[RMDB]
RNA sequence: GGGAACGACUCGAGUAGAGUCGAAAAUGUCCAACCGUCUAAAAAACGGUUGUUAGCAAGGGCCGGGUAAGACCGGUGCCAGCCGCCGCGGUAAUACCGGCGGCUCGAGUGGUGGCCGAUAUUAUUGAAGUACUUAUCGGUUCGCCGAUAAGUACUUAAAAGAAACAACAACAACAAC
Reactivity to DMS in 0.01 (KOAc 150mM, MgCl2 10mM, bicine 150mM(pH8.5), 24C), signal-to-noise 5, nucleotides 027 to 126: u030g000u020c150c020a010a000c010c000g010u000c010u010a010a080a170a120a180a000c010g000g000u000u000g000u020u020a090g010c110a110a130g000g000g010c010c000g010g000g020u020a100a120g010a180c010c000g000g010u000g000c050c050a070g010c000c010g030c000c000g030c140g000g000u010a090a100u060a250c040c000g000g000c000g000g010c000u010c020g000a030g010u010g000g020u010g010g000c010c010g000a070u020a030u030u030a100u020u010g020
Reactivity to 2A3 in 0.01 (KOAc 150mM, MgCl2 10mM, bicine 150mM(pH8.5), 24C), signal-to-noise 2, nucleotides 027 to 126: u070g030u040c000c000a000a000c000c010g010u000c050u030a020a060a080a000a000a000c010g020g000u000u010g020u030u090a020g000c040a040a070g030g040g000c010c030g040g020g000u090a130a000g040a070c000c000g020g010u020g160c020c000a010g030c020c010g000c000c010g050c070g050g010u030a020a020u030a160c020c010g000g010c000g000g010c000u000c000g040a030g030u070g050g010u050g020g050c000c000g040a040u030a050u200u090a120u070u170g100